The record gives the reactivity of an RNA of 177 nucleotides to DMS and 2A3. It was measured as part of the RMDB library OK2TRN. The 2A3 profile rests on 5,883 reads. 2A3 adducts were read by reverse transcription with SuperScript II with manganese.
RNA sequence: GGGAACGACUCGAGUAGAGUCGAAAAGGAAGGUGUCAAUGCGCAGAUCGGCCGGGUUGAUGUCGAUCUCGACAUCGUCGAAUUCCGGGAGAAUCGCCACGGUACAGGCCGAAGUAUGGAUGCGGCCGUAGGCACAAUGGUUCGCCAUUGUGCCUACAAAAGAAACAACAACAACAAC
Reactivity to DMS in 0.01 (KOAc 150mM, MgCl2 10mM, bicine 150mM(pH8.5), 24C), signal-to-noise 5, nucleotides 027 to 126: g010g010a050a060g020g030u010g000u000c030a090a080u000g010c120g030c100a050g020a080u000c030g020g010c010c050g000g010g010u010u010g020a060u000g020u010c000g020a130u020c260u010c020g010a030c010a020u000c030g010u010c050g000a090a210u000u010c010c010g000g010g000a130g000a090a090u010c110g000c010c020a100c070g020g010u000a070c140a120g010g000c010c010g000a050a070g000u010a110u010g000g000a090u010g010c020g000g020c030c080
Reactivity to 2A3 in 0.01 (KOAc 150mM, MgCl2 10mM, bicine 150mM(pH8.5), 24C), signal-to-noise 3, nucleotides 027 to 126: g070g010a080a030g030g030u060g020u080c070a100a080u150g010c050g020c070a020g020a100u020c010g070g000c030c020g000g070g000u070u190g030a060u020g000u000c010g020a200u070c100u040c070g000a020c000a020u010c020g030u010c010g060a060a100u140u000c010c000g010g030g010a120g050a060a140u080c050g020c040c020a090c060g010g010u060a040c050a080g000g000c010c000g020a010a030g060u070a060u240g090g070a070u090g050c010g010g010c020c020